[RMDB]
RNA sequence: GGGAACGACUCGAGUAGAGUCGAAAAUGAUUUGGUUAGACCACUAAAGUUCAUAUCAACUUUGGACACCCAGUUGGUGGCUGGGAGUUUGGACCUCCACUAACAGUGAAAGAAUUUGCAUAGCUGGAUUAGAAUGUGAGUUCGCUCACAUUCUAAUAAAAGAAACAACAACAACAAC
Reactivity to DMS in 0.01 (KOAc 150mM, MgCl2 10mM, bicine 150mM(pH8.5), 24C), signal-to-noise 7, nucleotides 027 to 126: u010g000a100u000u010u000g010g010u000u010a100g000a240c050c060a130c090u010a050a050a050g010u000u000c070a070u000a090u010c070a040a040c040u000u000u010g010g010a300c060a110c010c020c060a080g010u000u000g000g020u000g000g000c140u000g010g000g000a100g010u010u010u010g020g000a240c040c010u000c010c010a040c020u000a030a030c030a070g000u000g000a050a120a100g000a060a070u000u000u000g010c100a070u000a100g010c070u000g000g000
Reactivity to 2A3 in 0.01 (KOAc 150mM, MgCl2 10mM, bicine 150mM(pH8.5), 24C), signal-to-noise 3, nucleotides 027 to 126: u140g010a040u080u030u050g020g020u060u090a050g060a070c010c030a020c080u080a080a080a030g020u040u050c040a050u040a050u200c020a010a070c020u020u060u030g010g020a030c010a040c040c010c020a020g000u020u020g010g030u020g020g060c090u020g010g060g000a060g080u090u170u090g070g010a050c000c000u000c010c000a010c010u020a030a010c000a010g020u030g040a020a070a050g040a050a140u080u070u120g020c050a040u050a060g010c050u050g050g020